[RMDB]
RNA sequence: GGGAACGACUCGAGUAGAGUCGAAAACGACAUGGCUUCGGCCAUGUCGAAAGGACGAGUGAGACCGAAACGGAGGUAGGUCCAACUACCUUCUCUCUCAAAAAAUCCGUUUGUUCGCAAACGGAAACACACAUAUACUCUUCGGAGUAUAUGUGUGAAAAGAAACAACAACAACAAC
Reactivity to DMS in 0.01 (KOAc 150mM, MgCl2 10mM, bicine 150mM(pH8.5), 24C), signal-to-noise 6, nucleotides 027 to 126: c020g010a020c000a000u000g010g000c010u000u010c230g010g000c000c010a000u010g010u000c000g000a030a060a090g010g010a090c130g000a100g020u000g010a070g010a100c100c040g010a060a110a130c200g000g000a020g010g020u000a000g000g000u010c170c180a070a240c000u000a010c000c010u000u000c010u000c060u010c020u010c020a000a020a080a070a110a110u000c000c000g010u000u010u000g000u000u010c200g010c010a000a000a010c000g000g000a010a050a110
Reactivity to 2A3 in 0.01 (KOAc 150mM, MgCl2 10mM, bicine 150mM(pH8.5), 24C), signal-to-noise 5, nucleotides 027 to 126: c010g000a000c000a000u010g000g000c000u080u040c220g080g010c010c000a000u000g010u000c000g000a000a000a000g040g020a030c080g020a030g100u080g020a040g020a040c050c080g080a150a100a030c130g030g010a010g000g010u010a000g000g020u030c070c020a070a090c010u000a010c000c000u020u020c020u000c000u000c000u000c010a100a110a020a010a010a030u020c000c000g000u010u000u000g050u030u050c240g000c120a010a000a000c000g000g000a000a060a000
Structure probing data (DMS and 2A3) for a 177-nucleotide construct. Reactivities are rounded to 0.1 and cut off at 0 and 3. Conditions: 150 mM KOAc, 10 mM MgCl2 and 150 mM bicine (pH 8.5), 24 C. For DMS, 7,690 sequencing reads were counted. It was measured as part of the RMDB library M2PK50. For DMS the reverse transcriptase was MarathonRT. For 2A3 the reverse transcriptase was SuperScript II with manganese.